[RMDB]
RNA sequence: GGGAACGACUCGAGUAGAGUCGAAAAUAAUGGCUGGGGUGCGGAGCAAUGGCACCACGGCAGUCCGGUGGGGGCUCGCCACGUGUGACUGCUGCGUUCGAGCCACUGGUCCCUGCUCCGAAGCUGCGCAAGCGUCGGCCUUCGGGCCGAUGCUUGUAAAAGAAACAACAACAACAAC
Reactivity to 2A3 in 0.01 (KOAc 150mM, MgCl2 10mM, bicine 150mM(pH8.5), 24C), signal-to-noise 2, nucleotides 027 to 126: u130a010a070u120g020g000c000u020g010g000g000g000u010g010c000g000g000a010g040c000a000a030u020g000g000c010a010c000c030a000c000g000g000c000a000g000u000c000c000g030g010u010g000g030g010g030g080c040u020c030g050c000c000a000c010g130u090g060u120g010a010c000u010g000c000u000g010c010g000u030u090c090g020a010g000c000c000a000c000u010g010g080u000c000c000c000u020g000c010u000c000c000g060a060a020g000c010u010g000c010
Reactivity to DMS in 0.01 (KOAc 150mM, MgCl2 10mM, bicine 150mM(pH8.5), 24C), signal-to-noise 2, nucleotides 027 to 126: u030a040a050u030g000g010c000u000g010g000g010g000u010g010c300g000g000a030g000c000a030a030u000g000g030c000a110c080c040a100c000g000g000c020a000g010u000c020c000g010g020u020g000g000g030g000g010c060u000c080g020c010c000a020c030g010u030g090u040g010a000c010u000g000c020u000g000c050g020u010u010c170g000a160g010c010c000a010c080u000g000g000u000c010c000c020u010g000c000u000c010c000g020a080a040g010c010u000g010c190